[RMDB]
Record summary:
This 177-nucleotide RNA was probed chemically with DMS and 2A3. The data come from the RNA Mapping Database (RMDB), library M2PK50. Values are in units of 0.01, from 0 to 300, in steps of 10. The RNA was probed in 150 mM KOAc, 10 mM MgCl2 and 150 mM bicine (pH 8.5) at 24 C.
RNA sequence: GGGAACGACUCGAGUAGAGUCGAAAAGUGGAUAGUUUCGACUAUCCACACAACUGAUGAUCUUACAGUGGAGGAUGAAGAAGAUGGCCAUCGGAUCCUCAUAUAGCACAGAGUUCGCUCUGUGCAACGUUCCAUGUGUGUUCGCACACAUGGAACGAAAAGAAACAACAACAACAAC
Reactivity to DMS in 0.01 (KOAc 150mM, MgCl2 10mM, bicine 150mM(pH8.5), 24C), signal-to-noise 1, nucleotides 027 to 126: g000u000g000g000a000u000a000g030u000u000u000c180g000a030c000u010a000u000c000c000a000c000a030c180a080a090c030u000g020a090u010g020a100u000c030u000u000a090c090a060g000u010g020g010a070g000g010a060u000g000a110a020g000a070a100g020a050u020g020g000c030c030a030u000c020g000g000a110u010c000c010u000c080a060u010a100u010a070g000c000a000c000a000g000a010g010u000u020c140g000c010u000c000u000g040u000g020c000a010a050
Reactivity to 2A3 in 0.01 (KOAc 150mM, MgCl2 10mM, bicine 150mM(pH8.5), 24C), signal-to-noise 3, nucleotides 027 to 126: g010u000g000g010a000u000a010g000u020u000u190c180g050a020c010u020a010u000c030c000a000c000a000c000a000a010c020u060g020a050u040g000a060u070c050u040u170a090c020a070g040u120g150g050a060g040g010a050u050g050a060a160g040a030a040g060a100u090g050g030c030c010a030u030c030g030g020a010u010c010c010u020c010a070u090a020u080a130g010c020a000c010a000g010a000g020u080u060c180g050c040u000c000u010g010u000g000c000a000a000
Reactivities are given for positions 27 through 126.